[RMDB]
RNA sequence: GGGAACGACUCGAGUAGAGUCGAAAAACUAUAAUUAUGAACCAUUCAACUGCAUCUGCAGCCCCAACAAUGUGGGGUGGAUUGGCCUAAUCCACAGACCAAGCGACAUUUUAAAAUCCAGCAGUUUAGACACGUAUUCCUCUUGCAGCAAAUCAAACAUGGGUAUUAGUUUCGACUAAUACCCAUGAAAAGAAACAACAACAACAAC
Reactivity to 2A3 in 0.01 (KOAc 150mM, MgCl2 10mM, bicine 150mM(pH8.5), 24C), signal-to-noise 2, nucleotides 027 to 156: a000c060u110a080u160a160a050u220u100a090u130g020a020a070c040c000a020u080u030c040a090a030c030u020g000c010a050u000c030u030g000c000a020g000c010c010c010c000a050a010c040a080a050u170g050u070g020g050g000g000u020g010g000a000u020u050g020g060c000c010u020a010a010u000c000c010a020c020a030g060a020c020c030a000a040g020c010g070a040c010a030u080u090u120u170a050a130a000a010u030c020c010a000g020c010a000g000u000u030u010a020g020a020c020a000c100g020u010a020u020u060c000c000u000c000u000u010g000c000a000g000c010a020a010a190u190c100a110a010a000
Reactivity to DMS in 0.01 (KOAc 150mM, MgCl2 10mM, bicine 150mM(pH8.5), 24C), signal-to-noise 1, nucleotides 027 to 156: a090c100u010a210u020a090a130u000u010a120u010g000a190a110c080c020a150u000u010c080a080a040c000u010g040c000a150u030c140u010g000c010a140g010c000c000c040c010a130a100c140a080a040u000g080u000g040g010g030g040u000g000g000a130u010u000g030g020c050c020u000a090a080u000c030c030a060c000a110g010a070c000c020a050a080g000c050g010a070c100a040u000u010u000u010a020a080a090a160u000c010c050a130g000c040a090g040u010u000u020a110g010a120c070a040c060g020u000a110u000u000c000c000u000c050u000u000g010c010a050g010c020a020a110a160u000c070a090a090a160

Source information:
Conditions: 150 mM KOAc, 10 mM MgCl2 and 150 mM bicine (pH 8.5), 24 C. Structure probing data (2A3 and DMS) for a 207-nucleotide construct. The 2A3 profile rests on 965 reads. For DMS, 1,741 sequencing reads were counted.